[RMDB]
RNA sequence: GGGAACGACUCGAGUAGAGUCGAAAAGAUAUGGAUGACACAGCUCGAUAAGAUGAUGCUCGGAAACGAGCAUUCAUCUUUUGACGAGCGUGUCAUCCUAAGUCAAACGCUGGGUUCGCCCAGCGAACCUGGUAUCAAUCUUCGGAUUGAUACCAGGAAAAGAAACAACAACAACAAC
Reactivity to 2A3 in 0.01 (KOAc 150mM, MgCl2 10mM, bicine 150mM(pH8.5), 24C), signal-to-noise 2, nucleotides 027 to 126: g020a000u060a020u140g010g000a000u000g000a000c010a000c080a140g000c000u000c000g080a090u050a300a020g000a010u000g000a000u010g000c000u000c040g030g010a080a070a030c010g010a000g000c010a000u040u020c000a000u000c000u000u000u000u010g070a050c030g000a000g000c030g000u020g010u000c000a000u000c000c000u010a010a010g000u000c030a130a060a110c030g010c020u020g040g000g060u090u110c300g170c020c000c000a010g000c000g000a010a020
Reactivity to DMS in 0.01 (KOAc 150mM, MgCl2 10mM, bicine 150mM(pH8.5), 24C), signal-to-noise 3, nucleotides 027 to 126: g000a020u000a300u010g000g000a010u000g000a010c000a020c010a230g040c010u000c000g020a240u010a020a000g010a010u000g010a010u000g000c000u000c000g000g000a080a090a170c000g000a010g010c000a000u010u000c000a020u000c010u000u000u000u000g010a190c100g010a020g010c000g020u000g010u000c000a000u000c010c000u000a000a060g000u010c030a140a110a180c030g020c010u000g000g020g020u000u020c300g010c000c000c000a020g010c000g010a010a050